[RMDB]
Structure probing data (2A3 and DMS) for a 177-nucleotide construct. Values cover nucleotides 27 to 126. The RNA was probed in 150 mM KOAc, 10 mM MgCl2 and 150 mM bicine (pH 8.5) at 24 C.

RNA sequence: GGGAACGACUCGAGUAGAGUCGAAAAGAUAUGGAGGGAGGAUCCCUGGAGGCAAUGUGGUCGGAAACGACCAUGACCUCCCUGGAUCCAUCGAUCUCCUAAGUCAAAAUCGGUGUUCGCACCGAAACGUGUAGCGUAUGUUCGCAUACGCUACACGAAAAGAAACAACAACAACAAC
Reactivity to 2A3 in 0.01 (KOAc 150mM, MgCl2 10mM, bicine 150mM(pH8.5), 24C), signal-to-noise 1, nucleotides 027 to 126: g000a020u060a000u240g000g000a010g000g000g010a030g000g020a000u010c000c020c000u000g050g000a010g000g000c030a070a060u180g000u000g020g000u000c000g050g060a060a050a050c010g000a000c010c010a010u010g060a050c000c000u000c020c000c000u010g000g000a000u010c000c010a050u220c020g000a050u000c010u000c000c010u030a190a030g050u030c040a030a040a010a290u050c020g040g000u020g040u060u070c240g000c070a000c000c000g010a040a010a010
Reactivity to DMS in 0.01 (KOAc 150mM, MgCl2 10mM, bicine 150mM(pH8.5), 24C), signal-to-noise 2, nucleotides 027 to 126: g000a040u000a300u000g000g000a030g020g030g000a040g020g000a010u000c010c000c040u010g010g000a000g000g010c100a180a070u000g030u000g000g010u000c020g050g010a120a090a200c000g010a000c000c010a010u000g000a100c010c000u010c000c000c000u010g000g000a020u010c000c010a130u000c150g000a080u000c010u000c000c000u000a020a110g000u000c020a100a030a090a140u000c000g030g040u000g000u000u000c270g060c020a010c000c010g000a020a040a080